RNA sequence: GGGAACGACUCGAGUAGAGUCGAAAAACUUGGAUUCGAGACCGCCGCAGCGCUUGCCGCCCAUGGUGCACACGUGGUGCUGGCUGUGCGCAACCUCGACAAGGGCAAGCAGGCGGCGGCACGCAUCAUCCUAUUGAGAGUUCGCUCUCAAUAGGAUAAAAGAAACAACAACAACAAC
Reactivity to 2A3 in 0.01 (KOAc 150mM, MgCl2 10mM, bicine 150mM(pH8.5), 24C), signal-to-noise 9, nucleotides 027 to 126: a010c040u060u090g110g010a010u040u030c030g030a040g150a300c010c000g000c000c000g000c010a050g100c010g000c060u020u010g000c000c010g170c050c010c010a060u130g050g000u090g050c020a010c000a010c070g110u120g030g090u140g110c060u080g100g000c020u040g010u010g000c010g000c020a030a080c000c030u090c090g060a080c100a090a090g030g000g000c000a010a010g000c020a040g110g000c000g000g000c000g000g000c010a000c000g020c000a010u020c000
Reactivity to DMS in 0.01 (KOAc 150mM, MgCl2 10mM, bicine 150mM(pH8.5), 24C), signal-to-noise 5, nucleotides 027 to 126: a060c080u010u020g010g010a050u000u020c020g000a160g020a300c020c010g000c010c000g020c010a100g030c170g000c000u000u000g010c010c000g000c020c020c040a080u000g010g030u000g010c030a040c040a030c050g020u010g020g010u020g010c040u020g000g010c100u010g000u000g010c020g020c010a120a050c050c020u030c250g000a060c170a060a060g020g000g000c010a010a030g020c020a180g000g000c000g000g010c000g000g000c050a040c040g000c090a030u000c030
This 177-nucleotide RNA was probed chemically with 2A3 and DMS. The data come from the RNA Mapping Database (RMDB), library OK1LIB. Values cover nucleotides 27 to 126. For 2A3, 17,353 sequencing reads were counted. For DMS, 15,290 sequencing reads were counted.